[RMDB]
RNA sequence: GGGAACGACUCGAGUAGAGUCGAAAAGGUCGCGCUACCGGUCGAAUGCGCUGGCGCAGGAGAAGACCGGCGAAGCCUGGGUCGACUUCCAGCUGUACGGCGGUCACACGCGCGGCGAGUUCGAGAACAAUAAACCGUGGUUCGCCACGGUUUAUUGAAAAGAAACAACAACAACAAC
Reactivity to DMS in 0.01 (KOAc 150mM, MgCl2 10mM, bicine 150mM(pH8.5), 24C), signal-to-noise 3, nucleotides 027 to 126: g000g030u000c000g000c070g010c110u000a120c090c050g010g010u010c020g000a060a000u020g010c000g010c020u000g010g050c130g010c030a200g010g020a170g010a130a140g010a020c010c000g000g010c010g000a130a090g030c140c050u010g010g000g010u030c070g000a180c220u010u050c000c000a010g020c030u030g010u000a110c010g000g000c000g000g010u000c040a130c060a130c170g000c000g010c020g000g000c010g010a110g000u000u000c010g000a090g020a110a200
Reactivity to 2A3 in 0.01 (KOAc 150mM, MgCl2 10mM, bicine 150mM(pH8.5), 24C), signal-to-noise 4, nucleotides 027 to 126: g090g000u030c020g010c030g030c110u070a040c030c050g040g090u060c010g030a070a020u100g010c010g020c080u100g230g020c060g000c090a060g000g160a120g060a200a010g010a040c000c000g010g000c010g030a060a010g020c050c050u070g040g000g020u100c110g050a100c050u130u010c020c000a010g000c010u060g060u150a060c020g010g110c010g000g040u030c000a060c020a010c060g000c000g010c000g000g000c010g000a020g020u000u050c030g010a030g010a140a030
The record gives the reactivity of an RNA of 177 nucleotides to DMS and 2A3. 2A3 adducts were read by reverse transcription with SuperScript II with manganese. Values cover nucleotides 27 to 126. For DMS the reverse transcriptase was MarathonRT. Conditions: 150 mM KOAc, 10 mM MgCl2 and 150 mM bicine (pH 8.5), 24 C. The 2A3 profile rests on 3,149 reads. It was measured as part of the RMDB library OK1LIB. Values are in units of 0.01, from 0 to 300, in steps of 10.